An RNA of 177 nucleotides, treated with 2A3 and DMS and read out base by base. For DMS the reverse transcriptase was MarathonRT. 2A3 adducts were read by reverse transcription with SuperScript II with manganese. The RNA was probed in 150 mM KOAc, 10 mM MgCl2 and 150 mM bicine (pH 8.5) at 24 C.
RNA sequence: GGGAACGACUCGAGUAGAGUCGAAAAAUAAUUGCCACUGAGGCCGCAUUUCUCUGUUUCACAUAUGGAUUGCCAGUUAUGACACAAAAUGUAUCAACAUCAUUGCUGGCUAAAUGUACAGUGCAGCGAGAGUUUACAUGUUCGCAUGUAAACUCUCAAAAGAAACAACAACAACAAC
Reactivity to 2A3 in 0.01 (KOAc 150mM, MgCl2 10mM, bicine 150mM(pH8.5), 24C), signal-to-noise 6, nucleotides 027 to 126: a000u220a030a070u090u080g030c030c000a060c080u140g060a070g090g010c030c050g050c070a070u020u060u020c080u000c010u020g040u030u110u090c080a070c030a040u190a110u100g140g020a130u110u100g010c000c000a000g000u040u010a020u010g020a020c020a000c030a180a100a080a060u120g050u090a240u210c110a110a090c030a030u050c000a000u000u030g000c010u000g000g000c000u010a000a030a010u020g000u020a030c040a050g020u010g070c030a020g060c040
Reactivity to DMS in 0.01 (KOAc 150mM, MgCl2 10mM, bicine 150mM(pH8.5), 24C), signal-to-noise 4, nucleotides 027 to 126: a060u060a070a020u040u010g000c040c000a120c180u020g000a110g000g030c050c070g020c120a060u000u010u020c010u040c020u010g000u000u010u020c030a160c100a120u010a070u000g000g000a140u010u040g000c000c000a000g010u000u000a000u000g020a110c240a100c300a100a070a110a090u030g000u010a060u070c180a130a130c200a090u000c010a000u000u000g000c020u000g000g020c000u000a010a030a040u000g010u000a050c080a040g030u000g020c040a040g000c170

Values cover nucleotides 27 to 126.